Chemical mapping of a 177-nucleotide RNA with DMS and 2A3. The reactions ran in a buffer of 150 mM KOAc, 10 mM MgCl2 and 150 mM bicine (pH 8.5), at 24 C. The data come from the RNA Mapping Database (RMDB), library OK2TST. 2A3 adducts were read by reverse transcription with SuperScript II with manganese. For DMS, 4,495 sequencing reads were counted. Reactivities are given for positions 27 through 126.
[RMDB]
RNA sequence: GGGAACGACUCGAGUAGAGUCGAAAAAGAAGAGAAUGACUUUCCUGGAAGCUCCACCAAAUAGACUUUAAUUUGCAUGUUGUGGUCCAGACCUGUCCAUAGCCACCCCUACCUGCAAGGAAGCCUAACAUUGUCAGAAUUUCGAUUCUGACAAUGUAAAAGAAACAACAACAACAAC
Reactivity to DMS in 0.01 (KOAc 150mM, MgCl2 10mM, bicine 150mM(pH8.5), 24C), signal-to-noise 5, nucleotides 027 to 126: a090g010a090a080g020a090g010a120a080u010g010a110c040u010u010u000c040c010u000g000g010a090a150g020c050u000c020c040a050c120c050a050a060a090u010a060g000a060c060u000u000u000a060a080u010u000u000g020c100a050u010g000u010u020g020u010g010g000u020c050c050a100g000a090c080c030u000g020u000c010c030a060u000a080g000c030c040a080c040c030c010c020u010a070c050c020u000g000c060a070a050g030g000a050a070g000c040c040u000a090
Reactivity to 2A3 in 0.01 (KOAc 150mM, MgCl2 10mM, bicine 150mM(pH8.5), 24C), signal-to-noise 2, nucleotides 027 to 126: a000g080a030a000g050a010g050a080a100u110g030a080c000u080u060u000c000c000u020g030g020a030a000g050c010u010c000c010a030c040c030a020a040a100u080a040g050a030c030u050u040u240a130a120u130u110u110g000c020a020u080g010u080u010g040u080g000g000u000c010c000a020g040a070c030c000u050g030u030c060c000a070u060a050g020c010c000a010c000c010c010c000u030a060c010c000u000g000c010a000a050g000g030a050a010g040c000c010u010a010
DMS adducts were read by reverse transcription with MarathonRT.